[RMDB]
RNA sequence: GGGAACGACUCGAGUAGAGUCGAAAAUAGAAGUCGCGAUAAAUCGGCGCCGGCGGAGCGGAGGGAGAUCCGAGCGGCGGCGGCAAGCUGGCUGCGAGCGGCUGAGCAGCACUCCAAGCUCGAACAAGUCAAAUAUAAGAUUCGUCUUAUAUUUGACAAAAGAAACAACAACAACAAC
Reactivity to DMS in 0.01 (KOAc 150mM, MgCl2 10mM, bicine 150mM(pH8.5), 24C), signal-to-noise 4, nucleotides 027 to 126: u000a130g010a170a080g010u000c010g020c020g010a110u010a050a100a090u000c030g010g000c020g020c050c020g010g010c040g010g010a080g010c030g010g020a070g010g020g010a140g000a120u000c030c010g000a100g020c030g010g010c040g000g000c050g000g020c100a050a080g010c020u010g010g010c020u000g000c060g000a100g010c030g010g000c040u000g010a080g000c010a060g010c030a180c050u000c010c010a130a140g010c020u000c010g010a080a090c230a060a110
Reactivity to 2A3 in 0.01 (KOAc 150mM, MgCl2 10mM, bicine 150mM(pH8.5), 24C), signal-to-noise 4, nucleotides 027 to 126: u120a020g140a120a010g030u030c020g000c030g070a080u090a200a110a030u080c030g070g000c000g030c020c020g050g010c040g030g010a060g040c080g020g070a080g040g030g030a110g010a060u020c020c010g000a050g080c020g040g000c020g030g030c010g000g030c000a030a020g010c040u080g070g000c020u020g010c020g030a030g020c000g020g000c010u010g000a000g020c030a010g010c020a020c040u000c020c020a070a030g000c010u010c020g010a050a020c060a140a040